[RMDB]
RNA sequence: GGGAACGACUCGAGUAGAGUCGAAAACUCUUCGUCUCGGACUGGCUCAUCUUCGGAGUGGGGGCGGCGGCGUCUGGUCUCUUAUUUCUUCCUUCUGAGAAGAGGAGACAGCUUGCCGCUCGCCCCCGCCUAAGUAUUGGUUCGCCAAUACUUAGGCAAAAGAAACAACAACAACAAC
Reactivity to DMS in 0.01 (KOAc 150mM, MgCl2 10mM, bicine 150mM(pH8.5), 24C), signal-to-noise 3, nucleotides 027 to 126: c050u000c030u000u000c060g010u010c030u000c030g010g000a090c050u000g010g000c050u000c050a090u000c050u000u000c080g020g010a130g030u000g030g020g010g010g040c010g010g010c010g010g020c000g010u010c010u000g000g020u010c000u000c000u010u000a150u020u000u000c000u000u000c030c070u000u030c220u000g010a150g000a010a020g000a050g000g000a010g000a050c000a010g010c130u000u010g020c000c010g000c010u010c010g020c010c000c000c000c010